[RMDB]
RNA sequence: GGGAACGACUCGAGUAGAGUCGAAAAGAUAUGGAGUCGGGACAUGCCUACCGUCGGAAACGACGGACAAGAGGCAACAGCCACGACUCCUAAGUCAUAGGCUUGAUCUGUUCGCAGAUCAAGCCAACUAGCUUCUUUUCUUCGGAAAAGAAGCUAGAAAAGAAACAACAACAACAAC
Reactivity to 2A3 in 0.01 (KOAc 150mM, MgCl2 10mM, bicine 150mM(pH8.5), 24C), signal-to-noise 1, nucleotides 027 to 126: g010a020u030a040u140g000g000a000g000u000c030g040g030g000a070c090a160u180g010c030c000u010a040c020c000g010u020c000g010g030a070a060a030c010g010a000c010g030g000a040c070a040a180g070a010g060g080c060a100a070c070a070g050c030c010a300c090g000a000c000u000c010c000u010a010a010g010u000c040a070u150a250g010g010c000u000u010g010a000u000c000u000g050u100u130c300g000c100a000g000a000u000c000a010a010g000c000c000a000a000
Reactivity to DMS in 0.01 (KOAc 150mM, MgCl2 10mM, bicine 150mM(pH8.5), 24C), signal-to-noise 1, nucleotides 027 to 126: g000a040u020a300u000g000g000a010g000u000c020g010g000g010a040c050a170u000g000c000c000u010a180c000c000g000u010c000g010g000a110a070a160c020g000a000c000g000g030a070c200a170a130g000a020g020g000c000a040a060c260a140g010c000c000a020c000g010a020c000u000c000c000u000a000a060g010u000c000a130u000a280g020g010c000u000u000g000a000u000c000u000g010u000u020c190g030c000a000g000a000u000c000a000a010g000c010c020a000a020